[RMDB]
RNA sequence: GGGAACGACUCGAGUAGAGUCGAAAAGAGGUAAAGGUGAACAGCCUGAGAUCUCCAAUGGGUUAGGAAAUUUCCAGUAUCAUGAUUCUUCUGGAGUGCCUACUCAGAAGUGGUGUGAGAAUUUGUACCACCCUCAGGGAUUCGUCCCUGAGGGUGGAAAAGAAACAACAACAACAAC
Reactivity to DMS in 0.01 (KOAc 150mM, MgCl2 10mM, bicine 150mM(pH8.5), 24C), signal-to-noise 1, nucleotides 027 to 126: g010a050g000g010u010a020a220a050g010g050u000g000a100a090c240a150g000c020c000u010g010a120g010a010u010c010u000c000c070a040a090u000g030g000g010u010u000a050g000g000a070a080a070u000u000u000c000c000a040g010u000a060u000c190a020u030g010a190u010u010c140u000u010c000u010g010g010a010g040u000g020c020c020u010a050c020u000c010a030g000a080a130g000u000g010g020u000g010u010g010a120g000a100a120u000u010u000g040u010a230

Source: RMDB library OK2TRN, as collected in RNAgym.
Chemical mapping of a 177-nucleotide RNA with DMS.
For DMS the reverse transcriptase was MarathonRT.
The DMS profile rests on 733 reads.
The reactions ran in a buffer of 150 mM KOAc, 10 mM MgCl2 and 150 mM bicine (pH 8.5), at 24 C.